[RMDB]
Source: RMDB library M2RFPK, as collected in RNAgym.
Chemical mapping of a 207-nucleotide RNA with 2A3.
RNA sequence: GGGAACGACUCGAGUAGAGUCGAAAACCCAGUUCCGGGGCCGUUCACUGGAUCCGAAGCCUCUAGAAGGAUAAUAUAGGCACUCGAUACCCUACUCCGACUCAAUACGUCCCCGUCGUACAGAAUGCAAGGGCAUCCCUGUUCGCAGGGAUGCCAAGCUACUUAAUCUCUUCGGAGAUUAAGUAGCAAAAGAAACAACAACAACAAC
Reactivity to 2A3 in 0.01 (KOAc 150mM, MgCl2 10mM, bicine 150mM(pH8.5), 24C), signal-to-noise 2, nucleotides 027 to 156: c000c000c040a010g030u050u020c020c020g000g030g000g070c010c000g020u110u160c110a130c070u050g010g020a070u020c000c050g060a040a000g050c000c000u090c030u100a120g010a220a110g180g000a050u100a270a000u080a050u050a070g010g000c020a070c160u020c030g070a080u130a170c020c030c000u090a070c030u060c030c000g010a030c030u020c130a110a130u090a070c000g000u020c000c010c050c000g000u030c050g050u040a100c030a160g130a170a100u130g050c030a060a050g100g020g030c020a000u000c000c000c020u000g010u030u050c190g000c100a000g010g030g010a000u000g010c000c000a000a000